[RMDB]
RNA sequence: GGGAACGACUCGAGUAGAGUCGAAAAAUAUUACUUUGAGUUAAUCGGCGUGUUCCACGCAGGCUUUUGUCUUGAACGAUUUACCAUAGAAUAACAAAUUUAUGAUUUUGUGUCUUUGUUUGUUCGGUACAUAGUCAUCUUUCGAGAUGACUAUGUAAAAAGAAACAACAACAACAAC
Reactivity to DMS in 0.01 (KOAc 150mM, MgCl2 10mM, bicine 150mM(pH8.5), 24C), signal-to-noise 4, nucleotides 027 to 126: a120u010a050u010u010a090c020u000u000u000g010a140g020u000u000a020a040u000c030g000g020c010g010u000g010u020u010c180c060a070c020g010c030a060g000g000c030u000u010u000u010g030u010c010u010u000g020a150a100c020g010a010u000u000u010a030c000c000a030u000a030g000a100a020u030a040a060c030a030a060a050u010u000u030a080u030g000a090u010u010u010u010g010u010g000u000c070u000u000u000g010u010u000u020g000u000u000c060g000g010
Reactivity to 2A3 in 0.01 (KOAc 150mM, MgCl2 10mM, bicine 150mM(pH8.5), 24C), signal-to-noise 4, nucleotides 027 to 126: a000u080a050u070u090a190c020u030u030u070g080a100g030u060u080a020a000u020c000g010g000c010g020u050g100u180u110c240c010a020c000g000c020a000g000g020c030u180u280u250u300g000u000c000u010u100g070a110a020c020g010a010u020u000u030a030c000c000a000u020a060g010a020a000u090a070a020c030a030a050a050u110u190u130a240u280g120a140u010u060u150u220g130u020g000u010c040u030u080u030g080u080u050u050g010u000u020c020g010g000